RNA sequence: GGGAACGACUCGAGUAGAGUCGAAAAGUAUCAUCUCGAUGGAGUGGUCGUCAGUGAAGGGAUGAAACGAAUGAUAAUCGACCUGCAACGUCAUUGGCUCAGUGAGUAUCACGCGUCACGUGAGAAAUGACGUCAUCCUCUUCGGAGGAUGACGUCAAAAAGAAACAACAACAACAAC
Reactivity to 2A3 in 0.01 (KOAc 150mM, MgCl2 10mM, bicine 150mM(pH8.5), 24C), signal-to-noise 1, nucleotides 027 to 126: g000u000a000u140c010a040u000c000u010c070g090a070u100g080g040a030g030u040g000g030u060c060g000u050c010a050g010u040g200a070a020g010g000g000a030u070g000a060a060a020c070g040a110a040u190g020a090u130a080a090u070c000g000a050c000c010u010g020c110a100a040c020g020u000c020a050u000u080g070g020c030u000c010a020g010u020g000a010g040u060a060u180c060a040c060g040c000g100u090c050a020c030g080u070g030a000g040a000a020a000
Reactivity to DMS in 0.01 (KOAc 150mM, MgCl2 10mM, bicine 150mM(pH8.5), 24C), signal-to-noise 1, nucleotides 027 to 126: g020u000a040u000c010a040u000c020u010c020g030a120u010g000g000a110g040u000g000g000u000c050g000u010c050a130g020u010g000a040a190g000g020g000a030u000g000a080a110a070c050g000a030a110u030g000a050u000a090a100u000c010g000a100c000c000u000g020c050a150a070c080g000u000c030a050u000u000g010g010c000u000c080a060g030u000g000a060g000u000a070u010c050a030c120g030c150g010u000c160a030c050g000u000g010a030g010a080a070a080

Chemical mapping of a 177-nucleotide RNA with 2A3 and DMS. The data come from the RNA Mapping Database (RMDB), library OK2TST. Conditions: 150 mM KOAc, 10 mM MgCl2 and 150 mM bicine (pH 8.5), 24 C. The DMS profile rests on 1,015 reads.